[RMDB]
RNA sequence: GGGAACGACUCGAGUAGAGUCGAAAAAGGGGGUUAGCCGAAAGGGUCUUCAUGGUCAAGAACUACGACAAGAAUUAUGAUGCCGAUCUUGACCCCGAAUUCUGCCCUCCCCCCAAACCAGAGGAAGCGGUUAACAUUAUUUCGAUAAUGUUAACCGAAAAGAAACAACAACAACAAC
Reactivity to 2A3 in 0.01 (KOAc 150mM, MgCl2 10mM, bicine 150mM(pH8.5), 24C), signal-to-noise 4, nucleotides 027 to 126: a000g050g010g000g000g020u100u130a020g040c040c020g040a060a020a010g040g000g000u030c020u040u010c020a030u090g000g000u010c000a020a000g010a050a050c070u130a080c100g050a020c020a040a050g140a220a050u260u120a100u300g110a050u080g030c020c000g020a010u000c000u000u020g000a010c010c000c000c010g000a000a030u100u000c020u070g020c000c000c010u010c010c000c030c010c000c010a040a060a030c020c000a010g030a040g110g090a160a010g060
Reactivity to DMS in 0.01 (KOAc 150mM, MgCl2 10mM, bicine 150mM(pH8.5), 24C), signal-to-noise 5, nucleotides 027 to 126: a100g030g010g000g000g000u000u000a100g040c060c040g010a080a100a150g020g010g010u000c080u010u010c030a150u000g000g000u000c000a030a020g000a040a080c180u010a100c040g020a020c020a050a110g010a130a150u000u010a140u010g000a140u000g010c000c010g000a110u000c010u000u000g000a020c010c000c290c100g000a040a040u000u000c050u000g000c000c000c000u010c010c010c000c000c000c030a050a090a140c080c060a090g000a100g000g010a120a170g020